[RMDB]
RNA sequence: GGGAACGACUCGAGUAGAGUCGAAAACGUUCGACAUGCGCGGCCAGACCAAACGGUUCGCGCUCGACUGCGAGCGAUUCGCCGACGCGGUCCUGGAACAAGAGCUCGUCCACGACAACAACCCGGUGAUGAAAGCGCACAUCACGAACGCGCACCGCGGUCAAUGAAUGUUCGCAUUCAUUGACCGAAAAGAAACAACAACAACAAC
Reactivity to 2A3 in 0.01 (KOAc 150mM, MgCl2 10mM, bicine 150mM(pH8.5), 24C), signal-to-noise 4, nucleotides 027 to 156: c030g030u030u030c010g030a050c060a130u160g010c010g010c020g020g020c020c020a050g080a240c090c020a130a120a060c110g050g000u270u290c030g010c000g010c010u000c010g030a050c050u060g030c010g010a030g030c040g050a050u040u070c020g030c020c020g070a120c040g020c090g040g000u010c000c050u040g020g020a090a030c060a210a020g060a020g110c080u040c130g020u000c020c020a060c030g050a010c010a190a000c000a010a040c050c020c010g000g000u010g000a050u010g020a090a030a030g020c010g000c010a030c000a090u080c000a020c030g030a060a000c030g010c010g010c050a040c040c040g000
Reactivity to DMS in 0.01 (KOAc 150mM, MgCl2 10mM, bicine 150mM(pH8.5), 24C), signal-to-noise 1, nucleotides 027 to 156: c070g020u010u030c030g020a080c090a170u000g010c020g000c040g030g120c010c020a090g020a180c120c160a110a120a200c050g000g010u000u000c020g000c000g000c020u000c030g020a160c150u000g000c000g020a130g030c000g020a230u000u010c010g000c010c000g000a130c070g030c020g010g030u000c020c010u000g000g010a120a070c110a040a050g010a210g000c070u000c020g030u000c000c020a100c000g040a050c030a120a120c070a070a050c120c030c020g000g010u000g010a070u010g000a030a010a200g000c000g010c000a190c040a070u000c010a190c060g000a060a060c050g000c030g020c020a170c060c000g010